An RNA of 177 nucleotides, treated with DMS and 2A3 and read out base by base. The reactions ran in a buffer of 150 mM KOAc, 10 mM MgCl2 and 150 mM bicine (pH 8.5), at 24 C. The DMS profile rests on 3,627 reads.

RNA sequence: GGGAACGACUCGAGUAGAGUCGAAAAGAGUAUUGCAGUCUGGUCGACGUCGUAAGCGGUAAGGGCGAGGUCUGCGUCGUCGACCUCGAUAAAUUCUGGCCGCACUUAAGAAACAACUGCCGCACUCGCUGCUAGUACUAUUCGUAGUACUAGCAGCAAAAGAAACAACAACAACAAC
Reactivity to DMS in 0.01 (KOAc 150mM, MgCl2 10mM, bicine 150mM(pH8.5), 24C), signal-to-noise 2, nucleotides 027 to 126: g000a090g000u000a030u020u020g020c020a070g020u000c100u010g020g000u030c000g000a080c070g010u000c100g000u030a020a080g010c040g000g000u000a090a090g000g000g020c010g020a040g010g000u000c000u020g070c080g010u020c140g040u000c000g000a000c000c030u000c100g020a090u020a010a090a180u020u000c050u020g000g010c000c030g030c030a020c080u020u020a070a080g000a110a060a090c060a110a020c020u020g000c010c050g040c010a050c010u000c070
Reactivity to 2A3 in 0.01 (KOAc 150mM, MgCl2 10mM, bicine 150mM(pH8.5), 24C), signal-to-noise 7, nucleotides 027 to 126: g030a010g030u090a040u100u130g010c040a010g030u000c060u070g070g010u040c040g020a060c030g020u050c020g050u070a120a080g000c010g020g080u110a100a070g110g060g030c040g020a030g000g030u020c050u090g030c020g080u080c010g020u020c010g030a000c000c000u000c000g010a010u090a030a100a020u140u080c040u050g050g000c000c000g030c010a030c020u100u090a120a050g050a060a090a010c030a030a020c020u030g000c000c020g020c020a030c010u030c050

For 2A3, 8,138 sequencing reads were counted.